[RMDB]
RNA sequence: GGGAACGACUCGAGUAGAGUCGAAAAGAUAUGGACGAAUGGAGUCCGAACACCUGAAUCUCGGAAACGAGUGAGUGUCCGGACUAUGAAGUUCGUCCUAAGUCAAACCGGAGCUUCGGCUCCGGAACACUACACCAAACUUCGGUUUGGUGUAGUGAAAAGAAACAACAACAACAAC
Reactivity to DMS in 0.01 (KOAc 150mM, MgCl2 10mM, bicine 150mM(pH8.5), 24C), signal-to-noise 2, nucleotides 027 to 126: g020a030u010a300u000g000g010a020c000g010a000a020u000g020g020a020g000u000c010c000g010a010a010c020a000c000c070u020g010a140a070u000c000u000c010g000g010a090a110a180c010g010a010g000u010g000a100g000u000g000u000c010c000g000g000a000c000u000a130u000g010a130a210g000u010u000c000g000u000c000c000u000a000a120g010u000c010a090a140a160c000c000g000g000a000g000c020u010u000c200g050g020c000u000c000c000g010g010a000a040
Reactivity to 2A3 in 0.01 (KOAc 150mM, MgCl2 10mM, bicine 150mM(pH8.5), 24C), signal-to-noise 2, nucleotides 027 to 126: g010a000u100a030u150g000g000a010c020g010a020a000u070g040g030a000g000u000c000c000g000a000a000c000a000c010c050u090g180a150a140u090c000u000c020g020g020a120a090a070c020g010a020g000u050g070a090g000u010g010u000c020c000g000g020a000c000u040a300u150g020a020a010g000u000u000c000g000u000c000c010u010a100a020g060u000c020a070a030a060c000c020g000g020a010g010c030u130u170c300g120g000c000u010c000c000g000g010a000a010